[RMDB]
RNA sequence: GGGAACGACUCGAGUAGAGUCGAAAAAAUAUGCAUAACGGCCUGAUGGCGAUUGCCGCGGCGCGUCACGUCGGCGUGCUGCCGGCGGAUGCCGCGAACGCGCUGGGCAGCUUUAUCAACGCCCGCCCUAUGGAUCGCUAUUCGUAGCGAUCCAUAGAAAAGAAACAACAACAACAAC
Reactivity to DMS in 0.01 (KOAc 150mM, MgCl2 10mM, bicine 150mM(pH8.5), 24C), signal-to-noise 4, nucleotides 027 to 126: a060a060u050a030u010g010c110a060u010a060a060c170g010g000c000c030u010g010a100u010g010g000c040g000a080u030u030g040c210c000g030c010g010g010c020g000c070g030u000c050a090c020g040u000c030g040g000c000g010u050g030c170u040g020c030c010g030g020c010g000g000a030u010g000c020c000g000c030g000a050a060c080g000c010g020c030u000g020g010g000c010a070g010c050u000u010u000a030u010c050a080a090c170g010c000c010c010g040c080c090
Reactivity to 2A3 in 0.01 (KOAc 150mM, MgCl2 10mM, bicine 150mM(pH8.5), 24C), signal-to-noise 7, nucleotides 027 to 126: a000a000u300a050u120g040c060a030u080a210a050c060g060g010c000c000u140g080a160u160g100g000c020g150a190u040u200g060c030c010g050c000g020g000c030g000c070g050u010c030a130c150g020u020c020g000g020c050g080u270g140c130u270g010c000c010g000g000c000g010g020a030u110g000c030c010g000c000g000a020a020c010g000c000g030c040u090g000g000g000c000a010g020c020u070u150u090a110u100c030a030a050c050g010c000c020c000g020c000c000